[RMDB]
RNA sequence: GGGAACGACUCGAGUAGAGUCGAAAACUCAACUUUCAGUGACAACCCUUGCCAACAUCUCAAGUGCCAAUCUCGUCACUGCGAAUGUUCAAACACUCAAUGCAGUAUUCUCGAAUCUUCUGAAUCUCAACGUCAGUACCGGUGCGAACAUCACCCAUGAACUAGUUAGAUUCGUCUAACUAGUUCAAAAAGAAACAACAACAACAAC
Reactivity to DMS in 0.01 (KOAc 150mM, MgCl2 10mM, bicine 150mM(pH8.5), 24C), signal-to-noise 4, nucleotides 027 to 156: c020u010c040a080a080c030u010u000u000c020a050g040u000g010a100c030a120a150c050c030c040u000u000g000c050c020a090a100c050a050u010c060u000c110a090a090g020u000g020c020c050a070a090u000c050u000c080g020u000c030a070c030u010g030c070g000a080a080u000g020u010u000c060a110a080a100c040a040c030u000c030a080a130u000g020c000a050g010u000a070u000u000c020u000c020g020a080a120u000c020u000u000c030u010g020a070a090u010c030u010c040a030a040c040g020u000c040a050g030u010a060c040c020g010g010u000g000c040g000a060a070c050a120u000c040a090c000c010c030a280
Reactivity to 2A3 in 0.01 (KOAc 150mM, MgCl2 10mM, bicine 150mM(pH8.5), 24C), signal-to-noise 9, nucleotides 027 to 156: c030u050c040a040a050c030u060u130u060c020a030g010u010g040a030c020a040a070c030c010c000u030u040g030c050c040a080a070c030a210u070c070u030c110a090a060g030u040g090c030c030a070a100u050c060u050c140g030u020c010a010c020u010g010c030g060a080a060u100g020u060u080c070a070a110a040c030a040c050u080c040a040a120u120g010c020a020g030u040a070u120u040c060u020c040g100a110a110u020c040u120u010c020u090g040a050a050u030c020u010c090a060a100c070g060u030c020a020g010u030a070c030c040g020g010u020g020c030g030a030a010c010a030u040c020a050c000c020c000a070
This 207-nucleotide RNA was probed chemically with DMS and 2A3. The reactions ran in a buffer of 150 mM KOAc, 10 mM MgCl2 and 150 mM bicine (pH 8.5), at 24 C. For 2A3, 11,633 sequencing reads were counted. 2A3 adducts were read by reverse transcription with SuperScript II with manganese. DMS adducts were read by reverse transcription with MarathonRT. For DMS, 10,243 sequencing reads were counted.